[RMDB]
RNA sequence: GGGAACGACUCGAGUAGAGUCGAAAAGUCGAUAACGAUUUCGACGAAAACACAUUAUCCGACAAGGACAUUGAUAACAUCUUUGCCGUCAUCAUGAACGAAAUAUCUAAAAUUGAAAAAAGCGAAAGCAGCGAUGUCAAUUAUACUAAAAUCAUCACACUCUUCACCUAUUCGUAGGUGAAGAGUGAAAAGAAACAACAACAACAAC
Reactivity to DMS in 0.01 (KOAc 150mM, MgCl2 10mM, bicine 150mM(pH8.5), 24C), signal-to-noise 2, nucleotides 027 to 156: g000u000c000g030a050u000a130a190c150g030a220u030u010u000c010g020a030c060g010a110a000a090a100c060a200c070a110u010u000a060u000c020c030g000a020c050a070a080g000g010a070c060a160u000u030g050a160u000a070a100c170a300u000c000u000u000u000g000c020c020g000u000c020a070u010c050a060u000g030a020a180c050g010a090a090a070u020a100u000c040u010a050a020a050a130u000u000g010a000a030a080a090a090a110g030c030g000a030a080a130g000c130a030g030c080g000a020u000g000u000c050a010a100u000u000a090u000a160c150u000a040a040a120a090u020c070a050u000c020a110
Reactivity to 2A3 in 0.01 (KOAc 150mM, MgCl2 10mM, bicine 150mM(pH8.5), 24C), signal-to-noise 6, nucleotides 027 to 156: g010u010c010g020a030u110a190a110c090g070a120u060u060u020c010g010a000c020g010a040a030a070a010c100a010c020a080u070u110a050u050c030c030g020a040c100a050a080g050g010a010c040a040u040u110g030a050u050a100a040c030a050u030c020u020u040u060g020c000c010g050u040c000a050u020c010a030u100g060a060a020c040g020a050a090a060u110a020u020c050u120a070a120a150a130u070u100g040a060a060a050a050a040a010g030c020g030a100a070a000g030c040a000g020c010g040a010u040g030u020c010a010a050u100u090a070u060a130c080u150a040a060a060a060u130c040a030u080c000a010